[RMDB]
RNA sequence: GGGAACGACUCGAGUAGAGUCGAAAAACAAGUUCGAGGCAUGUAUAACGGAGACAGAGCGCGUAAACAAGUUUUGGUGGAUCAUGGAUUUAGAUUACCGAGUGCAUUAGAUAACCGUCCACUUAAACUUAACGCAUACAUUCGUGUAUGCGUUAAGAAAAGAAACAACAACAACAAC
Reactivity to DMS in 0.01 (KOAc 150mM, MgCl2 10mM, bicine 150mM(pH8.5), 24C), signal-to-noise 7, nucleotides 027 to 126: a070c090a090a100g010u020u010c050g010a140g000g000c040a060u010g010u020a070u040a110a130c120g000g010a090g000a060c060a050g000a070g020c030g000c070g010u010a050a060a070c160a050a070g010u000u000u000u000g010g010u000g010g000a040u000c090a080u010g000g000a090u000u010u010a050g000a080u010u030a090c060c060g000a050g010u010g010c090a050u010u010a050g000a050u020a040a070c060c040g010u000c020c010a040c040u010u020a020a050a050
Reactivity to 2A3 in 0.01 (KOAc 150mM, MgCl2 10mM, bicine 150mM(pH8.5), 24C), signal-to-noise 8, nucleotides 027 to 126: a000c070a020a040g060u090u110c020g030a060g030g030c050a030u060g050u090a060u060a190a050c040g070g000a040g010a040c020a040g050a020g030c020g000c010g050u080a020a040a080c080a040a080g020u030u040u070u090g030g010u020g030g030a020u040c040a090u130g060g020a040u090u060u140a100g040a170u040u120a070c030c040g040a040g050u080g020c030a030u030u130a040g050a070u090a070a030c020c010g020u020c000c010a020c000u020u110a050a050a020

An RNA of 177 nucleotides, treated with DMS and 2A3 and read out base by base. Conditions: 150 mM KOAc, 10 mM MgCl2 and 150 mM bicine (pH 8.5), 24 C. For DMS, 16,551 sequencing reads were counted. Values cover nucleotides 27 to 126. For 2A3, 9,876 sequencing reads were counted.